[RMDB]
RNA sequence: GGGAACGACUCGAGUAGAGUCGAAAAUAGCCUCUGUUCGAAAUCAUCGGGAGUGAUCCAGAUGACGGUCCUGCCAUGAGACCGCAACGAGAGCAUGUCGCAUCGAAUGGACUCGGGGAGUCGGCAGUGUAGUGGGGAUGGUUCGCCAUCCCCACAAGCUCAAGGUAAUGUUCGCAUUACCUUGAGCAAAAGAAACAACAACAACAAC
Reactivity to 2A3 in 0.01 (KOAc 150mM, MgCl2 10mM, bicine 150mM(pH8.5), 24C), signal-to-noise 1, nucleotides 027 to 156: u110a000g040c010c000u090c080u050g050u010u040c050g050a030a050a090u020c010a000u040c020g000g000g020a020g030u200g010a100u000c000c000a010g000a050u050g000a030c000g000g020u010c040c000u070g190c080c010a080u080g000a020g000a080c030c020g030c040a070a090c100g080a100g010a030g070c040a030u160g120u080c060g010c050a110u020c110g060a050a010u030g060g030a000c050u010c030g010g010g060g030a050g030u030c000g050g040c050a140g060u060g090u300a190g000u030g030g000g020g000a000u000g010g000u010u000c100g030c040c000a000u000c000c000c000c010a000c000a000a000